[RMDB]
RNA sequence: GGGAACGACUCGAGUAGAGUCGAAAAAAACCAAAGCUUUUGGGCUCCGGGGGAAGAAUGGUUGCAAAGCUGAAACUUAAAGGAAUUGACGGAAGGGUACCACCAGGAGUGGAGCCUGCGGCUUAAUUAUGGAGAACAUAUUCGUAUGUUCUCCAUAAAAAGAAACAACAACAACAAC
Reactivity to DMS in 0.01 (KOAc 150mM, MgCl2 10mM, bicine 150mM(pH8.5), 24C), signal-to-noise 5, nucleotides 027 to 126: a050a040a080c050c000a110a060a030g010c010u000u000u020u020g010g020g020c010u000c020c000g010g040g000g020g020a100a020g010a090a080u000g000g010u010u030g010c070a070a070a080g010c060u020g000a070a070a130c070u020u010a070a080a090g010g010a060a100u030u010g000a110c070g020g000a080a060g000g000g010u020a090c060c030a020c060c040a050g000g000a150g010u020g000g000a120g020c000c010u010g010c300g000g000c000u010u000a050a080u020
Reactivity to 2A3 in 0.01 (KOAc 150mM, MgCl2 10mM, bicine 150mM(pH8.5), 24C), signal-to-noise 6, nucleotides 027 to 126: a000a000a000c040c010a040a020a000g020c020u030u080u170u150g010g010g000c010u000c010c010g030g010g010g010g020a040a010g020a080a080u120g030g030u060u060g040c050a070a050a060g040c040u100g040a090a070a030c040u090u150a130a050a030g090g030a070a110u100u090g040a050c030g020g030a040a030g060g000g010u040a090c000c030a010c020c020a030g040g050a080g060u130g010g010a000g020c010c000u010g010c020g010g000c000u010u010a020a000u040